Source information: This 177-nucleotide RNA was probed chemically with DMS and 2A3. The 2A3 profile rests on 641 reads.

[RMDB]
RNA sequence: GGGAACGACUCGAGUAGAGUCGAAAAGUAGGGACAGCCUAUAUGGCUUUGUUUAAUGAAAUCUUUGCAAAACGAUUCAACGGGAAGAUGAUCCUGAGAAUCGAAGAUACGGAUCAAACACGUAGCCCACCAUACGCCACUUCGGUGGCGUAUGGUGAAAAGAAACAACAACAACAAC
Reactivity to DMS in 0.01 (KOAc 150mM, MgCl2 10mM, bicine 150mM(pH8.5), 24C), signal-to-noise 1, nucleotides 027 to 126: g010u000a050g000g000g000a100c100a100g000c020c030u020a090u000a050u000g000g020c010u000u020u020g030u000u000u000a060a090u020g000a000a120a060u000c010u000u020u010g030c140a150a050a110a230c000g000a000u000u010c000a070a210c300g000g000g010a100a100g000a150u090g010a140u040c020c010u000g010a280g000a020a000u000c020g000a050a070g000a150u000a040c110g000g000a110u000c040a110a060a100c190a110c230g000u010a090g000c020c070
Reactivity to 2A3 in 0.01 (KOAc 150mM, MgCl2 10mM, bicine 150mM(pH8.5), 24C), signal-to-noise 1, nucleotides 027 to 126: g000u000a010g100g000g130a280c150a030g080c020c010u130a130u010a090u300g010g000c000u080u060u010g040u030u070u030a080a070u150g050a000a030a100u010c030u110u060u190g070c130a000a090a020a070c000g000a030u000u010c040a080a110c020g040g010g010a070a110g130a300u300g060a130u030c000c000u030g000a020g000a000a000u000c000g040a030a000g000a010u050a010c060g020g010a030u070c020a000a070a000c040a020c150g030u060a050g000c000c000